[RMDB]
RNA sequence: GGGAACGACUCGAGUAGAGUCGAAAAGGUACCAGAUGCCGGUUGCGGUAUCGCCGGUCACGGUGAUUUCCGGAUGGGUGACCCGGUGUUCGGUGAUGACACCCGGGCCGAGUGCCUGGCGCAGGUACAGUGCGUUAACGUUCGCGUUAACGCACUGAAAAGAAACAACAACAACAAC
Reactivity to 2A3 in 0.01 (KOAc 150mM, MgCl2 10mM, bicine 150mM(pH8.5), 24C), signal-to-noise 2, nucleotides 027 to 126: g150g000u030a080c000c010a050g010a190u120g020c020c020g000g130u120u090g220c000g000g000u020a010u010c010g000c020c000g000g070u240c070a040c230g020g010u020g020a100u080u160u190c020c000g040g010a060u120g180g020g020u130g090a120c000c000c000g000g000u040g090u110u080c030g080g150u150g080a150u240g010a030c000a020c030c000c020g010g000g000c020c030g080a130g050u140g030c000c050u030g000g030c040g000c050a030g030g000u060a060
Reactivity to DMS in 0.01 (KOAc 150mM, MgCl2 10mM, bicine 150mM(pH8.5), 24C), signal-to-noise 2, nucleotides 027 to 126: g000g020u000a000c000c000a160g040a110u010g020c010c010g020g000u000u090g000c030g010g000u020a000u000c000g000c010c030g010g000u060c300a040c000g000g010u000g000a040u000u030u000c010c000g000g010a040u040g000g010g020u010g000a210c210c010c090g020g000u040g030u060u020c030g040g000u040g030a090u010g000a050c030a030c020c000c060g000g010g010c050c030g000a100g020u040g000c050c000u030g000g010c030g000c090a060g000g010u000a110
Background
This 177-nucleotide RNA was probed chemically with 2A3 and DMS. Values cover nucleotides 27 to 126. The DMS profile rests on 3,030 reads. Conditions: 150 mM KOAc, 10 mM MgCl2 and 150 mM bicine (pH 8.5), 24 C.